[RMDB]
RNA sequence: GGGAACGACUCGAGUAGAGUCGAAAAAGCCCAUCCGUGGUGUGGAGGGCUCUGACUACAUCAAUGCCAGCUUCCUGGAUGGUUAUAGGUCAGCAUGCAUGUCACUGCCCCACCAUGCCCUACAGGGGCCUAGGCCUGUGCCUGGCUGGUGGGGGUGAGACUAUAGCGACUUCGGUCGCUAUAGUCUAAAAGAAACAACAACAACAAC
Reactivity to 2A3 in 0.01 (KOAc 150mM, MgCl2 10mM, bicine 150mM(pH8.5), 24C), signal-to-noise 2, nucleotides 027 to 156: a000g050c170c000c000a300u030c030c000g030u000g010g020u040g000u060g040g010a010g010g000g010c010u000c040u010g000a000c000u040a030c020a070u110c050a170a170u210g120c000c030a010g030c100u250u080c060c020u090g020g030a030u080g010g080u130u020a080u110a210g120g020u020c000a000g000c040a040u160g110c030a030u140g080u140c020a000c030u130g060c000c000c000c000a000c000c000a000u180g010c030c000c000u060a050c060a110g000g000g030g020c000c000u100a100g110g050c000c030u190g010u080g080c030c030u000g000g020c000u010g020g000u000g000g000g000g000g050u060g010
Chemical mapping of a 207-nucleotide RNA with 2A3. The reactions ran in a buffer of 150 mM KOAc, 10 mM MgCl2 and 150 mM bicine (pH 8.5), at 24 C. The data come from the RNA Mapping Database (RMDB), library OK3TST. For 2A3, 531 sequencing reads were counted.